[RMDB]
RNA sequence: GGGAACGACUCGAGUAGAGUCGAAAACGAUAAUAGCGUAUCGCUAUAUACGCUAUCGCGCGAUAUAUGCGCGCAUAAUAGCGUAUGCGUAUCGCAUAUAUGCGGCGAUAAUAUAUGCGGCGAUAGCGAGUUUCCCCAAGUUCGCUUGGGGAAACUCAAAAGAAACAACAACAACAAC
Reactivity to DMS in 0.01 (KOAc 150mM, MgCl2 10mM, bicine 150mM(pH8.5), 24C), signal-to-noise 2, nucleotides 027 to 126: c080g000a120u000a110a070u010a060g020c020g020u000a070u010c070g020c010u010a070u000a040u000a090c050g020c050u000a000u010c060g000c000g010c030g030a050u010a060u000a010u000g020c010g000c000g000c030a020u000a060a050u020a120g030c110g010u010a020u000g000c100g020u010a120u010c040g000c010a010u000a020u000a000u000g000c040g020g000c040g010a050u020a080a000u010a050u000a040u010g000c070g060g000c040g000a010u000a030g000c020
Reactivity to 2A3 in 0.01 (KOAc 150mM, MgCl2 10mM, bicine 150mM(pH8.5), 24C), signal-to-noise 2, nucleotides 027 to 126: c040g040a070u090a170a100u100a190g020c050g060u100a030u140c030g000c040u000a010u010a000u000a120c070g000c050u010a010u020c020g030c010g000c010g030a010u040a000u000a010u200g020c080g000c000g000c000a020u100a120a100u070a100g110c090g080u040a030u030g020c030g020u060a030u190c040g000c000a000u030a010u000a000u030g170c080g070g000c010g030a010u010a190a050u000a020u000a010u020g070c060g040g020c000g010a000u010a000g050c040
About this RNA: Structure probing data (DMS and 2A3) for a 177-nucleotide construct. The 2A3 profile rests on 1,841 reads. For DMS, 1,566 sequencing reads were counted. The RNA was probed in 150 mM KOAc, 10 mM MgCl2 and 150 mM bicine (pH 8.5) at 24 C.